[RMDB]
RNA sequence: GGGAACGACUCGAGUAGAGUCGAAAAGGUAGCGAUGGUAAAGAUGGGAUUCCUGGUAAGCCUGGGGCAGACGGACGUACGUCUUAUGUUCACUUUGCUUAUGCCGAUAGUGCCGAUGGUCAAAAGGGUUUCAGUUUAACUCAGACUGGAAAUAAACACACGUGAGAUAGUUCGCUAUCUCACGUGUAAAAGAAACAACAACAACAAC
Reactivity to 2A3 in 0.01 (KOAc 150mM, MgCl2 10mM, bicine 150mM(pH8.5), 24C), signal-to-noise 4, nucleotides 027 to 156: g080g010u050a010g000c040g030a060u080g010g050u070a050a080a080g050a020u050g000g000g020a060u060u100c020c020u070g020g040u070a040a030g050c010c020u020g040g000g000g010c030a010g000a030c040g020g000a020c090g040u120a020c090g070u060c010u020u130a040u070g020u050u080c050a060c140u080u070u110g010c030u080u070a040u200g040c010c010g100a140u080a050g060u070g020c000c030g040a090u100g020g020u030c020a020a010a050a080g010g060g000u000u010u010c010a000g000u020u050u040a130a090c130u090c090a000g020a030c000u010g000g070a000a030a040u170a010a150a000c090
Reactivity to DMS in 0.01 (KOAc 150mM, MgCl2 10mM, bicine 150mM(pH8.5), 24C), signal-to-noise 2, nucleotides 027 to 156: g000g030u010a040g040c040g010a130u010g000g040u000a050a070a120g020a110u000g020g010g010a150u000u020c010c030u000g040g020u000a080a110g040c070c040u000g000g010g020g050c060a050g010a080c140g020g010a090c050g010u010a080c170g010u010c040u000u010a150u000g020u010u000c030a030c070u000u000u000g000c030u010u000a110u010g000c030c040g000a150u000a060g040u000g010c060c080g000a120u000g010g000u000c100a030a050a100a090g000g010g010u010u000u000c010a080g000u020u000u000a020a070c090u000c110a130g000a080c010u000g000g000a010a090a090u010a050a080a110c150